Annotation:
An RNA of 177 nucleotides, treated with DMS and 2A3 and read out base by base. The 2A3 profile rests on 2,065 reads. 2A3 adducts were read by reverse transcription with SuperScript II with manganese. Values cover nucleotides 27 to 126. It was measured as part of the RMDB library 15KREP. The reactions ran in a buffer of 150 mM KOAc, 10 mM MgCl2 and 150 mM bicine (pH 8.5), at 24 C.

[RMDB]
RNA sequence: GGGAACGACUCGAGUAGAGUCGAAAAAGGAGUCCGCAGGUGGGAGGAUCAGCCACCGGAGAGGGACGCGAUGGUAAGAGUGGAGGAAAGUUCGGAGGGAAAUCCCAAGAAGGUCAUUCGAGAUUCAGUUCUAUAAUCUGUUCGCAGAUUAUAGAACAAAAGAAACAACAACAACAAC
Reactivity to DMS in 0.01 (KOAc 150mM, MgCl2 10mM, bicine 150mM(pH8.5), 24C), signal-to-noise 3, nucleotides 027 to 126: a130g020g020a140g020u010c010c050g030c090a130g010g020u010g000g000g010a100g000g000a060u030c080a120g000c020c060a050c020c030g000g010a170g020a090g020g020g010a050c080g010c080g000a070u010g000g000u000a070a050g010a110g040u000g000g000a070g020g000a060a070a110g000u000u000c070g000g000a110g010g010g010a050a070a090u010c020c020c020a070a130g010a040a080g010g000u000c080a090u010u010c090g000a140g010a100u000u000c090a170
Reactivity to 2A3 in 0.01 (KOAc 150mM, MgCl2 10mM, bicine 150mM(pH8.5), 24C), signal-to-noise 2, nucleotides 027 to 126: a040g070g010a050g020u030c040c010g000c090a050g000g050u020g020g000g050a050g030g000a040u040c040a030g080c010c030a020c000c010g000g020a040g030a020g040g000g010a010c020g000c010g050a070u080g010g020u030a060a030g060a050g050u080g010g030a040g000g040a040a070a010g030u070u050c040g000g030a020g030g000g030a050a060a030u030c000c010c020a000a040g050a040a020g040g020u030c020a060u050u110c070g040a030g010a130u060u050c000a020